[RMDB]
RNA sequence: GGGAACGACUCGAGUAGAGUCGAAAAAGAGGUAUCUGUCGCGUGAUUUUAAAUGAACUCAAAGCGGCGAUUGAGUCGAAAAAUGGCGCGACGAGACAAGAGCUCGCGCGACGUUUUGCUCUGAGCAUACUCAGGACCUGUUCGCAGGUCCUGAGUAAAAAGAAACAACAACAACAAC
Reactivity to DMS in 0.01 (KOAc 150mM, MgCl2 10mM, bicine 150mM(pH8.5), 24C), signal-to-noise 1, nucleotides 027 to 126: a110g010a030g010g000u000a030u000c000u020g020u000c020g000c020g060u000g020a010u010u010u000u020a020a100a170u010g010a070a070c040u000c000a030a040a120g010c010g030g000c010g010a090u000u000g000a060g020u000c070g000a010a000a010a040a000u000g020g020c000g020c000g000a060c000g000a010g010a020c050a150a130g020a120g010c020u000c050g070c300g010c040g020a030c090g010u010u000u000u000g000c030u000c040u000g020a070g000c100a160
Chemical mapping of a 177-nucleotide RNA with DMS. Reactivities are given for positions 27 through 126. Source: RMDB library OK2TST, as collected in RNAgym. The reactions ran in a buffer of 150 mM KOAc, 10 mM MgCl2 and 150 mM bicine (pH 8.5), at 24 C.